Structure probing data (DMS and 2A3) for a 177-nucleotide construct.

RNA sequence: GGGAACGACUCGAGUAGAGUCGAAAAAUGAAAUGCCAAGACCCCUGGUGGACUGAGCGAGGCGAAGGCGAUGUUCUUGUAGGCAUUCGGUGAUCAAGGACGAAGGCUGGAGUAUCGAAAGUGAUUACUACGCCUAAAAGUUCGCUUUUAGGCGUAGAAAAGAAACAACAACAACAAC
Reactivity to DMS in 0.01 (KOAc 150mM, MgCl2 10mM, bicine 150mM(pH8.5), 24C), signal-to-noise 5, nucleotides 027 to 126: a070u020g010a060a070a060u030g010c010c040a070a100g000a170c040c010c000c060u000g010g000u000g000g000a060c040u000g020a100g010c020g000a060g010g020c040g010a240a080g000g020c040g000a090u020g010u010u000c030u000u010g020u010a090g000g000c050a070u020u020c060g020g000u010g000a100u020c050a030a060g000g010a050c050g000a080a100g000g010c010u010g010g010a200g010u000a050u010c030g010a050a060a080g000u010g010a100u020u010a130
Reactivity to 2A3 in 0.01 (KOAc 150mM, MgCl2 10mM, bicine 150mM(pH8.5), 24C), signal-to-noise 4, nucleotides 027 to 126: a000u250g030a050a050a010u130g030c020c010a020a000g100a120c000c020c000c010u020g050g000u060g030g000a050c050u050g020a020g110c010g010a000g040g010c030g040a020a010g010g020c040g030a080u070g030u050u010c010u020u050g030u040a070g140g000c000a030u090u060c060g060g060u090g000a070u100c040a040a020g010g030a010c030g010a150a020g110g000c020u020g000g040a040g020u040a060u060c030g010a050a010a060g070u070g030a000u020u000a030

The RNA was probed in 150 mM KOAc, 10 mM MgCl2 and 150 mM bicine (pH 8.5) at 24 C. It was measured as part of the RMDB libraries RFM100 and RFMREP.